An RNA of 177 nucleotides, treated with 2A3 and DMS and read out base by base.

[RMDB]
RNA sequence: GGGAACGACUCGAGUAGAGUCGAAAAGACGCUAGCUGGAUCGCUAGUCUCUAGAUGAUCGACAGACAUACGCUGAUCCACUAGGUACGACUAGUCGAUCCAUGGUACCACUAGAGUACGAGCACUAGGAUAUAUGCCAAUUCGUUGGCAUAUAUCCAAAAGAAACAACAACAACAAC
Reactivity to 2A3 in 0.01 (KOAc 150mM, MgCl2 10mM, bicine 150mM(pH8.5), 24C), signal-to-noise 7, nucleotides 027 to 126: g100a020c100g000c060u030a040g060c040u050g010g000a000u000c000g000c010u010a000g010u000c010u000c000u010a160g000a200u050g010a020u040c030g030a040c050a080g150a070c050a190u300a080c200g010c070u070g010a050u020c010c010a010c010u000a000g030g010u080a050c130g010a010c010u000a000g040u280c060g000a000u000c000c000a010u020g020g000u020a040c010c030a080c170u130a030g020a030g090u040a040c040g030a020g040c040a030c120u080a070
Reactivity to DMS in 0.01 (KOAc 150mM, MgCl2 10mM, bicine 150mM(pH8.5), 24C), signal-to-noise 7, nucleotides 027 to 126: g000a080c120g020c030u000a070g020c110u000g010g000a010u000c020g020c000u000a010g010u000c010u000c000u000a010g020a170u000g000a040u000c010g020a050c050a100g010a180c300a160u010a120c210g020c000u000g000a080u000c020c160a230c000u000a020g010g010u010a020c180g000a020c010u000a010g000u020c020g000a010u000c010c020a010u000g010g010u000a080c080c050a300c110u000a020g000a090g030u010a040c060g010a090g000c130a110c120u000a130
Description
DMS adducts were read by reverse transcription with MarathonRT. The RNA was probed in 150 mM KOAc, 10 mM MgCl2 and 150 mM bicine (pH 8.5) at 24 C.